[RMDB]
RNA sequence: GGGAACGACUCGAGUAGAGUCGAAAACUUUAGAAUUUUGGCAAAUCAUACUGGUCACUUAUCUCAACUUUGAGAUGUGUUUGUCCUUGUAGUUAAUUGAAAGAAAUAGGGCACUCUUGUGAGCCACCUCAUAACUAUGUUUCGACAUAGUUAUGAGAAAAGAAACAACAACAACAAC
Reactivity to DMS in 0.01 (KOAc 150mM, MgCl2 10mM, bicine 150mM(pH8.5), 24C), signal-to-noise 7, nucleotides 027 to 126: c030u020u030u040a080g020a100a090u000u020u020u010g000g000c070a080a080a080u020c060a060u020a060c130u010g000g000u000c040a020c020u020u020a010u010c000u000c000a060a210c300u020u040u020g010a010g010a010u000g010u000g010u010u020u020g010u000c020c010u010u000g010u010a090g010u030u030a050a130u020u020g020a070a080a100g000a050a070a080u020a080g010g010g020c020a040c060u010c110u010u010g000u010g000a130g000c010c030a090c280
Reactivity to 2A3 in 0.01 (KOAc 150mM, MgCl2 10mM, bicine 150mM(pH8.5), 24C), signal-to-noise 9, nucleotides 027 to 126: c020u110u140u150a090g060a130a140u110u080u070u130g090g010c050a050a070a100u080c030a060u050a140c060u070g040g010u030c010a010c020u100u120a030u010c000u000c010a080a300c170u170u190u170g000a010g000a010u030g020u000g010u040u070u060g010u000c000c000u010u040g070u070a110g070u100u160a100a140u110u160g150a070a090a070g100a020a120a060u110a030g010g000g000c010a010c010u060c010u040u080g020u010g030a030g040c010c000a020c000
The record gives the reactivity of an RNA of 177 nucleotides to DMS and 2A3. It was measured as part of the RMDB library OK1LIB. Conditions: 150 mM KOAc, 10 mM MgCl2 and 150 mM bicine (pH 8.5), 24 C. The 2A3 profile rests on 20,390 reads. DMS adducts were read by reverse transcription with MarathonRT.